The record gives the reactivity of an RNA of 207 nucleotides to 2A3 and DMS. For 2A3, 4,660 sequencing reads were counted. The RNA was probed in 150 mM KOAc, 10 mM MgCl2 and 150 mM bicine (pH 8.5) at 24 C.
RNA sequence: GGGAACGACUCGAGUAGAGUCGAAAACAUGGUGAUUCGUCACCAUGAGGCUAGAUCUCAUAUCUAGCGCUUUCGAGCGCUAGAGUCCUUAUCUAGCCGGUUUAUACUUUCGAGUGUGAACCCGAUAUUCCGCGGAUCACUAUGAGUCGUUCGCGGCCAAGUACUCUACGUUCGCGUAGAGUACUUGAAAAGAAACAACAACAACAAC
Reactivity to 2A3 in 0.01 (KOAc 150mM, MgCl2 10mM, bicine 150mM(pH8.5), 24C), signal-to-noise 5, nucleotides 027 to 156: c010a000u000g010g020u010g010a020u040u070c220g050u010c100a000c000c000a000u010g010a030g000g020c000u000a000g000a020u010c040u020c070a060u070a040u200c000u000a000g000c000g000c010u080u050u140c300g080a000g000c010g000c000u000a000g000a000g000u040c030c010u070u060a000u000c000u000a000g000c000c010g000g000u010u020u000a100u000a020c010u060u080u100c140g050a010g010u030g000u020g040a040a040c000c020c010g020a040u030a150u240u090c060c030g020c030g030g030a030u050c020a020c040u120a170u300g070a020g020u020c020g000u010u000c050g010c000g120g000c040
Reactivity to DMS in 0.01 (KOAc 150mM, MgCl2 10mM, bicine 150mM(pH8.5), 24C), signal-to-noise 2, nucleotides 027 to 156: c000a010u000g010g010u000g010a040u000u010c250g020u000c000a010c000c010a000u010g000a050g020g020c000u010a010g000a040u000c060u030c020a050u010a260u000c010u000a010g000c010g010c010u000u000u000c300g020a050g040c000g020c030u000a010g000a040g010u010c140c040u000u000a090u000c010u000a010g000c010c010g020g030u000u000u000a050u000a020c050u000u000u000c230g020a040g020u020g020u000g020a000a110c020c010c040g000a120u020a160u000u000c020c020g080c020g000g010a060u000c080a070c040u000a080u000g000a080g020u000c040g000u000u000c010g000c010g000g040c100